Notes: Chemical mapping of a 207-nucleotide RNA with 2A3. Reactivities are given for positions 27 through 156. For 2A3 the reverse transcriptase was SuperScript II with manganese. The reactions ran in a buffer of 150 mM KOAc, 10 mM MgCl2 and 150 mM bicine (pH 8.5), at 24 C.
RNA sequence: GGGAACGACUCGAGUAGAGUCGAAAAUAGAAGAAGAGGCUAGGUGGUAUUCCGGUGUGGGAUACUUGGUAAUAUGUAACGCUAAUUGCAUAAGAUUGUAGGACGGAAUUUACAGUCUGGGUUUUUAAAAACUUCUCGUAGUUCGCUACGAGAAGAACCGAUGUAUGACGUUCGCGUCAUACAUCGGAAAAGAAACAACAACAACAAC
Reactivity to 2A3 in 0.01 (KOAc 150mM, MgCl2 10mM, bicine 150mM(pH8.5), 24C), signal-to-noise 2, nucleotides 027 to 156: u140a000g050a040a000g010a000a010g030a000g030g000c050u060a020g040g050u050g000g030u070a070u090u050c060c030g050g070u140g020u140g090g040g000a010u050a050c040u030u060g020g010u070a110a050u040a050u140g070u030a080a000c070g000c120u030a070a040u050u090g000c000a020u030a100a050g030a050u040u060g020u080a030g000g050a010c030g040g000a030a010u030u070u100a060c010a000g010u000c020u050g010g000g070u020u040u020u070u130a040a100a000a020a020c000u000u000c000u000c000g000u010a000g000u020u000c120g000c090u000a000c000g000a000g000a000a000g000a000a000